An RNA of 177 nucleotides, treated with DMS and 2A3 and read out base by base. It was measured as part of the RMDB library OK2TST. The DMS profile rests on 3,287 reads. Conditions: 150 mM KOAc, 10 mM MgCl2 and 150 mM bicine (pH 8.5), 24 C.
[RMDB]
RNA sequence: GGGAACGACUCGAGUAGAGUCGAAAAGCUGAGGUGGUAUGGUACCUGGGCAGGUGAGGGGUUGUAAAGAGCUCUGAGAGUCAGAGGACCUGGGUUCUAAUAGAGUCUCUGAUCCUCACUGUGUACCGGUAGGUGCGUUAUUCGUAACGCACCUACCAAAAGAAACAACAACAACAAC
Reactivity to DMS in 0.01 (KOAc 150mM, MgCl2 10mM, bicine 150mM(pH8.5), 24C), signal-to-noise 3, nucleotides 027 to 126: g020c020u000g010a040g020g030u010g000g000u010a080u020g020g020u000a040c040c040u010g010g010g000c070a120g000g010u000g020a050g010g000g010g030u020u000g010u020a080a100a060g000a020g000c010u010c030u000g010a060g000a070g000u010c030a020g010a200g010g000a180c050c010u000g000g010g000u010u010c030u000a090a100u010a040g010a030g000u010c020u010c000u000g000a090u010c010c010u010c000a030c040u000g010u010g020u010a070c090c060
Reactivity to 2A3 in 0.01 (KOAc 150mM, MgCl2 10mM, bicine 150mM(pH8.5), 24C), signal-to-noise 2, nucleotides 027 to 126: g060c060u060g040a030g010g060u050g000g010u140a080u140g040g020u050a050c000c060u050g020g000g010c040a030g060g030u030g010a060g030g020g020g000u000u080g050u060a070a120a020g010a010g000c000u000c000u020g060a060g000a020g040u020c020a030g030a130g080g070a040c020c000u020g000g000g080u080u010c040u040a140a250u100a160g020a000g130u090c010u000c000u000g030a040u010c000c000u040c000a030c030u060g030u000g030u080a100c000c000